Chemical mapping of a 177-nucleotide RNA with 2A3 and DMS. The RNA was probed in 150 mM KOAc, 10 mM MgCl2 and 150 mM bicine (pH 8.5) at 24 C. DMS adducts were read by reverse transcription with MarathonRT. The 2A3 profile rests on 841 reads. For DMS, 943 sequencing reads were counted. Reactivities are given for positions 27 through 126.
RNA sequence: GGGAACGACUCGAGUAGAGUCGAAAAUGAAGAUAAACGACUGGACGGAGAUUACACAGUUUAUCCUGGAGCACCGAGCCAAGGGCUCCUGUAAGUACGCCCUCCCGCUGCGCAUCCCCCCGUCAGCCGCCUGUAGCUAGUUCGCUAGCUACAGGCGAAAAGAAACAACAACAACAAC
Reactivity to 2A3 in 0.01 (KOAc 150mM, MgCl2 10mM, bicine 150mM(pH8.5), 24C), signal-to-noise 2, nucleotides 027 to 126: u180g000a000a090g030a050u040a130a010a000c020g080a050c080u160g020g000a010c010g130g010a070g000a140u130u280a060c060a010c030a030g000u000u020u080a030u020c040c010u020g000g010a000g000c020a190c270c030g080a050g060c010c070a080a090g030g010g000c000u000c020c020u000g020u000a000a080g030u010a010c040g000c000c000c010u000c000c000c000g010c090u070g000c020g000c010a160u010c000c000c000c000c000c000g030u060c010a010g030c070
Reactivity to DMS in 0.01 (KOAc 150mM, MgCl2 10mM, bicine 150mM(pH8.5), 24C), signal-to-noise 1, nucleotides 027 to 126: u040g000a150a090g000a100u000a000a010a080c070g000a110c170u000g000g000a040c140g050g010a020g000a220u000u000a110c070a020c080a160g000u000u050u000a030u000c010c080u050g060g030a000g000c010a070c000c000g000a300g020c090c110a060a080g000g020g030c090u000c050c030u040g000u010a030a150g000u040a030c020g000c000c000c010u000c120c030c000g110c230u040g000c110g000c050a050u000c000c000c000c000c170c000g040u020c110a150g000c150